[RMDB]
An RNA of 177 nucleotides, treated with 2A3 and DMS and read out base by base.
Reactivities are given for positions 27 through 126.
The 2A3 profile rests on 9,124 reads.
RNA sequence: GGGAACGACUCGAGUAGAGUCGAAAACGAGGUUCAUGUUGAUGAAAGGCUGCGAGAGAGGGCGCUGGUGCCGCUCAAUCGUAUGCUGGAUUUUGCGGCUACACUACGUGGAUAACGAAUAAUAAGGCACUAAGCUUAUGUUCGCAUAAGCUUAGUGAAAAGAAACAACAACAACAAC
Reactivity to 2A3 in 0.01 (KOAc 150mM, MgCl2 10mM, bicine 150mM(pH8.5), 24C), signal-to-noise 6, nucleotides 027 to 126: c030g020a040g070g020u040u040c040a020u090g050u060u080g090a180u030g050a080a000a060g020g000c020u010g010c030g000a020g000a010g010a020g030g050g000c030g000c190u180g150g140u280g010c020c020g180c080u010c000a010a030u000c010g010u030a050u230g020c020u010g020g010a020u060u030u030u140g040c050g020g000c030u060a010c030a000c060u090a030c050g030u030g000g040a040u060a170a030c060g020a040a010u130a140a040u100a090a070g110g000
Reactivity to DMS in 0.01 (KOAc 150mM, MgCl2 10mM, bicine 150mM(pH8.5), 24C), signal-to-noise 9, nucleotides 027 to 126: c080g010a110g010g010u000u000c050a070u000g010u000u000g000a080u000g000a090a120a160g000g010c010u000g000c010g000a040g010a300g010a050g020g000g020c020g010c220u010g010g030u010g020c020c010g000c000u000c020a020a160u000c010g020u000a030u010g020c040u000g000g000a140u000u000u000u000g020c040g000g010c030u000a070c070a060c040u000a050c070g010u010g000g000a090u000a050a070c080g000a080a050u010a070a090u010a080a090g010g000
It was measured as part of the RMDB library OK2TRN. The RNA was probed in 150 mM KOAc, 10 mM MgCl2 and 150 mM bicine (pH 8.5) at 24 C.